The data come from the RNA Mapping Database (RMDB), library VIROID. Chemical mapping of a 177-nucleotide RNA with 2A3 and DMS.
[RMDB]
RNA sequence: GGGAACGACUCGAGUAGAGUCGAAAAGGUGCCCUAUCCGAGCACUGCUGCUUCGGUAGAAAGGCUAAGCACGUCGCAAUGACGUAAGGUGGGACUUUUCCCUUGAGUUCAAGCGGUUGGACUCCGAGGAGUAUGAUAAGUUCGCUUAUCAUACUCCAAAAGAAACAACAACAACAAC
Reactivity to 2A3 in 0.01 (KOAc 150mM, MgCl2 10mM, bicine 150mM(pH8.5), 24C), signal-to-noise 7, nucleotides 027 to 126: g070g010u110g120c000c000c030u030a050u030c010c010g020a010g020c010a050c210u160g060c040u040g000c020u150u120c110g040g020u020a010g040a050a070a000g050g000c020u040a060a010g090c070a010c020g010u010c010g040c180a220a300u300g010a000c000g010u020a020a040g060g020u070g020g000g040a030c010u040u010u040u040c020c000c000u010u050g010a000g000u010u010c010a030a020g060c090g160g210u030u020g010g010a010c000u020c010c030g050a080
Reactivity to DMS in 0.01 (KOAc 150mM, MgCl2 10mM, bicine 150mM(pH8.5), 24C), signal-to-noise 7, nucleotides 027 to 126: g000g000u000g010c020c000c010u000a100u010c020c020g020a040g010c020a080c170u010g020c160u000g000c030u010u000c100g000g000u000a030g000a080a110a120g010g000c020u000a060a110g020c150a040c010g020u000c000g020c180a120a110u010g010a020c010g010u010a070a110g000g020u000g000g010g000a060c020u000u000u010u000c000c000c000u000u010g010a020g010u000u000c010a030a040g010c170g010g000u000u000g000g000a030c020u000c000c160g000a130
For DMS, 11,481 sequencing reads were counted. Conditions: 150 mM KOAc, 10 mM MgCl2 and 150 mM bicine (pH 8.5), 24 C.